[RMDB]
RNA sequence: GGGAACGACUCGAGUAGAGUCGAAAAUCACGAUCGUACUCACGUGUGUGUUCGUUCGAUCUCGAGAACUCGUGUGUGUACGUACACGAGAGUACGAGAACACGUUCACACUCACGAUCACGAGAGUGUGAUCUCGAGAGAGAGUGAACGAGAACUCCAACUGCGCCAGGUUCGCCUGGCGCAGUUGAAAAGAAACAACAACAACAAC
Reactivity to 2A3 in 0.01 (KOAc 150mM, MgCl2 10mM, bicine 150mM(pH8.5), 24C), signal-to-noise 2, nucleotides 027 to 156: u100c050a010c070g090a090u050c050g010u070a040c020u020c020a110c020g010u010g010u020g020u000g030u020u010c080g020u030u090c020g020a090u050c090u060c060g080a030g020a090a020c040u000c020g000u030g010u000g040u030g040u050a020c000g010u010a000c010a000c010g080a070g000a010g070u040a000c010g000a010g030a040a020c090a010c030g000u010u000c000a000c000a000c030u000c000a040c000g100a060u030c040a030c080g110a120g010a070g120u170g020u010g130a040u000c030u070c150g050a180g010a020g000a000g040a010g020u030g000a020a010c010g010a040g040a030a010c000u000c040